An RNA of 177 nucleotides, treated with 2A3 and DMS and read out base by base. The RNA was probed in 150 mM KOAc, 10 mM MgCl2 and 150 mM bicine (pH 8.5) at 24 C. For DMS, 1,442 sequencing reads were counted. For 2A3 the reverse transcriptase was SuperScript II with manganese. As a SHAPE reagent, 2A3 marks flexible, mostly unpaired nucleotides at the ribose 2'-OH. Values cover nucleotides 27 to 126. It was measured as part of the RMDB library OK1LIB.

RNA sequence: GGGAACGACUCGAGUAGAGUCGAAAACAGCGCUUGCCGCCCAUGGUGCACACGUGGUGCUGGCUGUGCGCAACCUCGACAAGGGCAAGCAGGCGGCGGCACGCAUCACCGAGGCCACCCCCGGCGCGCUCCGCAAAGAGUUCGCUCUUUGCGGAGCAAAAGAAACAACAACAACAAC
Reactivity to 2A3 in 0.01 (KOAc 150mM, MgCl2 10mM, bicine 150mM(pH8.5), 24C), signal-to-noise 2, nucleotides 027 to 126: c060a050g010c000g010c030u120u150g010c000c000g000c000c000c010a070u080g020g050u130g000c120a050c010a020c080g020u040g030g210u170g020c040u100g140g000c010u040g000u030g000c000g010c030a050a130c010c000u010c040g050a070c140a140a080g050g000g000c020a040a040g040c000a010g060g020c020g030g000c000g000g020c030a020c050g000c000a040u100c010a010c010c000g040a070g080g000c000c010a020c020c000c000c000c010g030g000c020g030c020
Reactivity to DMS in 0.01 (KOAc 150mM, MgCl2 10mM, bicine 150mM(pH8.5), 24C), signal-to-noise 1, nucleotides 027 to 126: c200a110g000c000g010c000u000u000g000c000c010g030c080c010c090a190u020g050g030u000g010c180a020c130a080c030g030u050g000g000u000g040c010u000g030g000c020u010g110u020g050c210g000c020a030a050c040c000u000c050g000a180c170a080a030g030g040g030c060a030a170g000c000a000g080g000c020g000g000c080g030g000c000a050c000g000c070a010u000c070a000c020c000g000a150g000g040c130c060a070c020c000c030c030c000g000g070c000g000c210